[RMDB]
RNA sequence: GGGAACGACUCGAGUAGAGUCGAAAAGAUAUGGACAUACAGAGCUUUUGACGCGGCGUAUUCGGAAACGAAUACCUCGCGAUAAGCUCGUAUGUCCUAAGUCAAACGCCGAAGUUCGCUUCGGCGACUCCUUAGCAGGGUUCGCCCUGCUAAGGAGAAAAGAAACAACAACAACAAC
Reactivity to 2A3 in 0.01 (KOAc 150mM, MgCl2 10mM, bicine 150mM(pH8.5), 24C), signal-to-noise 3, nucleotides 027 to 126: g000a010u020a010u090g000g020a010c010a010u030a000c130a230g000a010g020c030u120u190u300u300g300a230c080g000c000g000g000c020g010u000a000u000u000c030g000g000a010a040a020c000g020a010a000u000a010c000c010u040c020g030c000g040a040u080a040a000g010c010u010c000g000u000a000u000g000u000c000c000u020a000a010g020u000c000a070a070a040c020g000c000c000g000a010a000g020u070u300c300g060c210u000u010c010g000g010c000g020a000
Reactivity to DMS in 0.01 (KOAc 150mM, MgCl2 10mM, bicine 150mM(pH8.5), 24C), signal-to-noise 2, nucleotides 027 to 126: g000a020u000a250u000g000g000a010c000a000u010a000c000a300g030a030g010c000u000u000u000u020g010a190c050g010c000g030g000c300g000u010a020u000u010c000g010g000a080a050a080c000g030a020a000u000a010c000c000u000c000g020c010g030a010u000a020a000g000c010u000c000g000u000a000u000g000u000c000c000u000a000a050g000u000c060a110a100a190c020g030c000c000g030a020a040g030u000u010c300g000c000u000u000c010g020g000c000g010a020